The record gives the reactivity of an RNA of 207 nucleotides to 2A3 and DMS. The 2A3 profile rests on 3,995 reads. Source: RMDB library OK3TST, as collected in RNAgym. The reactions ran in a buffer of 150 mM KOAc, 10 mM MgCl2 and 150 mM bicine (pH 8.5), at 24 C.

RNA sequence: GGGAACGACUCGAGUAGAGUCGAAAACAUUGAGGAAUUUAGGUUCCAACACUUUUGAGGAACACACUCAGACCAUAGCAGCAAGAGAGUAAGAUUUAGAGAAGGCCAGUGACUUAUUUGUCUGGUGAAUCUGUGACAGAACUGUUAACGGGGGCCACUAUGAUAGUGGAUUCGUCCACUAUCAUAGAAAAGAAACAACAACAACAAC
Reactivity to 2A3 in 0.01 (KOAc 150mM, MgCl2 10mM, bicine 150mM(pH8.5), 24C), signal-to-noise 6, nucleotides 027 to 156: c040a030u080u120g030a060g030g060a090a080u070u130u140a180g050g000u030u010c010c010a100a050c060a120c090u160u150u090u130g070a060g010g010a040a000c030a000c010a010c050u010c030a000g020a050c020c010a050u050a070g040c020a010g000c020a050a020g030a010g020a000g070u050a050a020g030a040u030u110u140a070g000a010g020a070a030g040g020c010c020a030g030u020g050a030c030u060u140a110u180u230u120g040u020c020u020g010g010u040g030a020a030u010c030u050g040u050g050a020c030a020g060a080a050c040u050g010u090u050a040a030c030g020g000g000g000g010c000c000a010
Reactivity to DMS in 0.01 (KOAc 150mM, MgCl2 10mM, bicine 150mM(pH8.5), 24C), signal-to-noise 3, nucleotides 027 to 156: c040a180u000u010g010a140g010g020a050a040u010u000u010a110g010g020u000u000c010c020a070a140c100a090c110u000u020u000u000g000a160g010g010a060a110c020a150c040a100c020u000c000a100g020a080c030c050a110u000a060g020c010a070g020c030a060a050g000a150g020a140g000u010a050a060g000a100u000u010u000a070g020a100g020a070a080g000g020c040c020a060g030u000g010a080c050u010u000a120u000u000u020g020u010c030u000g000g030u010g010a050a070u010c020u000g010u000g000a110c020a070g000a050a070c050u000g010u010u000a070a080c050g000g010g010g030g010c020c040a050